[RMDB]
RNA sequence: GGGAACGACUCGAGUAGAGUCGAAAAAGUGUCAGUGAUCGGAACCUUAUAGGAUACACUGCACCGUCUGGCUUCGGAGCCUUGAUCGACAAGUAUCGCGUCUUCCAUGACUCGGUACUGAAGAAGGCGUGCUUCACUACUUCGGUAGUGAAGCACGAAAAGAAACAACAACAACAAC
Reactivity to 2A3 in 0.01 (KOAc 150mM, MgCl2 10mM, bicine 150mM(pH8.5), 24C), signal-to-noise 2, nucleotides 027 to 126: a000g040u040g100u140c020a000g000u010g030a050u050c070g160g200a120a130c030c030u210u140a260u160a220g000g040a010u100a100c010a000c000u000g000c010a000c000c000g020u080c020u070g060g040c080u090u110c120g160g090a060g000c010c020u060u070g060a080u060c000g030a020c030a080a010g010u000a010u020c000g000c010g000u010c000u290u100c030c050a110u220g010a010c010u000c000g000g020u000a000c000u000g010a020a010g070a010a030g120g000
Reactivity to DMS in 0.01 (KOAc 150mM, MgCl2 10mM, bicine 150mM(pH8.5), 24C), signal-to-noise 3, nucleotides 027 to 126: a080g010u000g000u010c010a030g020u000g010a090u010c040g000g000a050a130c120c080u000u010a170u010a140g020g010a110u000a110c030a030c010u000g010c010a020c020c060g000u010c030u000g010g020c060u000u000c100g010g000a130g000c020c010u030u040g000a110u000c030g000a140c120a160a030g000u010a020u000c000g000c200g000u000c000u000u010c130c260a090u020g000a010c000u000c040g020g010u000a010c000u000g000a080a140g010a040a040g010g000

Structure probing data (2A3 and DMS) for a 177-nucleotide construct. The RNA was probed in 150 mM KOAc, 10 mM MgCl2 and 150 mM bicine (pH 8.5) at 24 C. The data come from the RNA Mapping Database (RMDB), library OK2TRN. Values cover nucleotides 27 to 126.